[RMDB]
Conditions: 150 mM KOAc, 10 mM MgCl2 and 150 mM bicine (pH 8.5), 24 C. Structure probing data (2A3) for a 207-nucleotide construct.
RNA sequence: GGGAACGACUCGAGUAGAGUCGAAAAAUCCGUGGAUAUCGGGUGCGCACCGCUCCUCCGCCGGCUGUUCUCCUUCACAGCUAUGACCCAUGCGCCGCACAGGCAGUGUCCCGCUUCGUGUGCAAAAAAAACCGCCAGUACUUCGGUACUGGCGGAACCAUCCACUUAGGUUCGCCUAAGUGGAUGGAAAAGAAACAACAACAACAAC
Reactivity to 2A3 in 0.01 (KOAc 150mM, MgCl2 10mM, bicine 150mM(pH8.5), 24C), signal-to-noise 2, nucleotides 027 to 156: a000u060c020c030g010u050g010g030a110u040a080u290c020g000g010g020u070g040c040g000c010a030c000c010g020c030u060c010c010u010c010c030g020c020c060g030g000c010u050g020u070u110c110u070c030c030u170u190c080a050c000a070g050c020u110a070u230g100a120c030c000c020a050u110g060c030g010c080c040g010c010a040c000a020g040g040c010a020g010u010g050u040c020c030c020g030c010u040u020c070g140u020g020u010g040c060a080a000a000a000a000a010a000a140c020c010g030c000c000a000g000u000a000c010u040u080c130g130g030u010a000c000u010g000g000c000g010g010a000a000
Reactivities are rounded to 0.1 and cut off at 0 and 3. For 2A3 the reverse transcriptase was SuperScript II with manganese.